An RNA of 177 nucleotides, treated with DMS and read out base by base. Reactivities are given for positions 27 through 126. The data come from the RNA Mapping Database (RMDB), library TTRDEL. The reactions ran in a buffer of 150 mM KOAc, 10 mM MgCl2 and 150 mM bicine (pH 8.5), at 24 C.
RNA sequence: GGGAACGACUCGAGUAGAGUCGAAAAGAUAUGGAGGGAGUCGUGCGGAGAGUAUUAGUCGGAAACGACUGGGUACCUCGGAUAGCGACGACGAUCUCCUAAGUCAAAAGAUGAGUUCGCUCAUCAAUCACAUGUGAGGCUUCGGCCUCACAUGUGAAAAAGAAACAACAACAACAAC
Reactivity to DMS in 0.01 (KOAc 150mM, MgCl2 10mM, bicine 150mM(pH8.5), 24C), signal-to-noise 1, nucleotides 027 to 126: g000a030u040a300u000g000g000a030g000g030g000a300g000u000c000g070u000g010c080g010g000a050g000a100g040u000a030u000u080a080g000u000c010g100g000a130a110a100c030g000a000c000u000g000g030g000u000a030c050c020u020c040g020g000a130u010a140g010c000g010a020c010g000a030c000g000a300u020c000u000c000c000u010a010a040g020u020c000a050a050a120a130g000a040u000g000a010g040u000u000c300g010c010u000c020a020u000c000a020a100